[RMDB]
RNA sequence: GGGAACGACUCGAGUAGAGUCGAAAACGUGCUGUGAAGUGUCGGGUUAAGUCCCUUAACGAGCGCAACCCCUAUCGUUAGUUGCCCACGGUUCGGCCGGGUACUCUAGCGAGACUGCCGGCGUUAAAGCGUAACCCUAUUUCGAUAGGGUUACGCUAAAAGAAACAACAACAACAAC
Reactivity to 2A3 in 0.01 (KOAc 150mM, MgCl2 10mM, bicine 150mM(pH8.5), 24C), signal-to-noise 2, nucleotides 027 to 126: c010g100u170g000c030u100g040u130g150a060a060g010u020g060u120c000g000g000g020u050u020a080a070g270u080c060c000c000u000u030a070a050c020g030a070g020c020g000c010a030a100c030c000c000c030u070a000u040c000g010u030u030a020g000u030u030g010c030c000c040a070c040g000g020u060u060c110g040g000c040c000g000g060g000u040a070c040u060c000u040a000g000c000g000a000g020a040c030u090g040c030c020g000g020c050g040u000u100a130a090
Reactivity to DMS in 0.01 (KOAc 150mM, MgCl2 10mM, bicine 150mM(pH8.5), 24C), signal-to-noise 2, nucleotides 027 to 126: c070g020u050g020c000u020g020u030g010a050a040g040u000g000u030c060g010g010g000u020u000a080a150g000u030c010c000c020u010u040a030a060c030g010a080g000c130g040c070a100a140c050c030c030c050u040a100u010c000g000u000u000a010g000u000u010g030c000c000c130a300c010g000g030u000u040c140g000g000c010c020g000g010g000u000a040c090u000c000u000a070g010c020g010a020g000a120c060u000g000c060c010g020g000c010g010u020u020a050a090
Structure probing data (2A3 and DMS) for a 177-nucleotide construct.